[RMDB]
RNA sequence: GGGAACGACUCGAGUAGAGUCGAAAAGGCUGUUGAAAUACAUUCCUGUGCCGGCAAUACAGUGUGUAUGGAGGUCUCAAUGGCUCGGAAGUGCCAGCAAACCGGCGUAGAUAUUACCAGACGUAUGAUAGGAUGCAUCCGUUCGCGGAUGCAUCAACACUACAAGCUCGUUCGCGAGCUUGUAGUGAAAAGAAACAACAACAACAAC
Reactivity to 2A3 in 0.01 (KOAc 150mM, MgCl2 10mM, bicine 150mM(pH8.5), 24C), signal-to-noise 2, nucleotides 027 to 156: g040g020c040u050g020u300u020g060a010a030a040u050a030c010a020u060u160c040c020u000g030u000g010c040c020g090g000c070a060a100u170a180c040a020g080u000g000u000g000u120a020u060g020g020a000g000g020u000c020u030c110a080a110u080g000g000c030u010c100g010g070a110a000g080u030g040c000c010a030g080c100a070a070a000c040c020g020g010c030g030u060a040g050a090u060a040u200u170a100c030c020a020g050a130c110g140u120a050u140g120a030u080a180g210g000a020u000g000c000a020u000c000c000g060u030u020c070g000c020g070g000a000u000g000c000a000u000c000a000a000
Reactivity to DMS in 0.01 (KOAc 150mM, MgCl2 10mM, bicine 150mM(pH8.5), 24C), signal-to-noise 1, nucleotides 027 to 156: g000g060c000u010g010u000u040g000a070a130a090u000a030c030a060u000u000c300c040u010g000u010g020c000c040g000g080c030a060a090u010a010c020a050g000u010g060u000g040u010a050u020g040g010a100g000g070u000c010u010c030a100a120u020g020g040c020u000c010g010g010a160a160g040u000g000c000c000a060g030c100a060a120a090c020c020g010g000c050g040u010a080g010a160u010a080u010u010a080c010c030a040g010a060c020g000u010a040u010g000a160u000a120g020g010a020u000g010c000a010u010c050c010g000u010u020c300g000c070g000g000a010u000g000c000a000u010c000a020a120